[RMDB]
RNA sequence: GGGAACGACUCGAGUAGAGUCGAAAAUCCGCCGAAAGGGCAAAGGUUCCUUGGCAAUGUUCGUCAGCCGAGGGUUAGCCGAUCCUAAGGUCACCCCUAACAGGAAGUGAUCGAAAGGGAAGCUGGUGCAUGUGUCUAAGUUCGCUUAGACACAUGCAAAAGAAACAACAACAACAAC
Reactivity to DMS in 0.01 (KOAc 150mM, MgCl2 10mM, bicine 150mM(pH8.5), 24C), signal-to-noise 1, nucleotides 027 to 126: u000c000c030g050c080c000g000a000a030a070g000g000g000c170a060a160a080g000g000u000u020c000c000u000u000g000g010c000a100a050u010g000u040u020c060g010u000c070a250g030c000c000g000a080g000g000g000u020u000a080g010c010c000g000a150u050c020c020u000a030a300g000g010u000c000a000c000c070c000c000u030a170a070c300a140g000g000a160a100g000u000g000a010u000c000g040a050a040a050g000g000g010a210a140g000c030u010g000g070u050
Reactivity to 2A3 in 0.01 (KOAc 150mM, MgCl2 10mM, bicine 150mM(pH8.5), 24C), signal-to-noise 1, nucleotides 027 to 126: u000c000c000g020c000c000g270a260a130a050g090g000g050c090a090a050a000g050g000u080u010c000c000u010u000g000g040c070a130a110u070g070u140u260c170g090u110c150a120g040c000c000g000a020g060g000g030u110u170a020g040c010c030g020a080u060c010c000u010a040a010g010g000u010c000a000c000c010c000c000u040a100a060c020a070g050g030a140a200g010u000g000a020u030c010g060a110a090a020g060g010g000a030a050g110c110u190g030g160u090
Background:
Source: RMDB library RFMREP, as collected in RNAgym. Chemical mapping of a 177-nucleotide RNA with DMS and 2A3. The reactions ran in a buffer of 150 mM KOAc, 10 mM MgCl2 and 150 mM bicine (pH 8.5), at 24 C. Reactivities are given for positions 27 through 126.